[RMDB]
RNA sequence: GGGAACGACUCGAGUAGAGUCGAAAAGUCUGUCCAGCACAAAGUUACUUAGUCCCCAGAUGUCUGGAGAAGAGGAGGAUUCUGACUUGGCAGCCAAACUUGGAAUGUGCAAUAGAGAAAUAGUACGAAUCUCCAGAAGGUUCGCCUUCUGGAGAUUAAAAGAAACAACAACAACAAC
Reactivity to DMS in 0.01 (KOAc 150mM, MgCl2 10mM, bicine 150mM(pH8.5), 24C), signal-to-noise 2, nucleotides 027 to 126: g020u000c040u000g020u010c010c050a080g030c050a060c060a060a050a060g020u000u000a050c040u000u000a150g020u000c010c000c010c110a110g020a210u000g050u000c010u020g000g010a120g010a070a090g010a060g010g010a080g010g010a040u000u000c020u010g010a110c050u010u000g010g000c030a000g010c030c020a030a110a050c090u000u000g000g000a080a130u000g020u000g010c060a030a090u010a070g010a090g000a070a080a040u000a050g000u010a080c150g000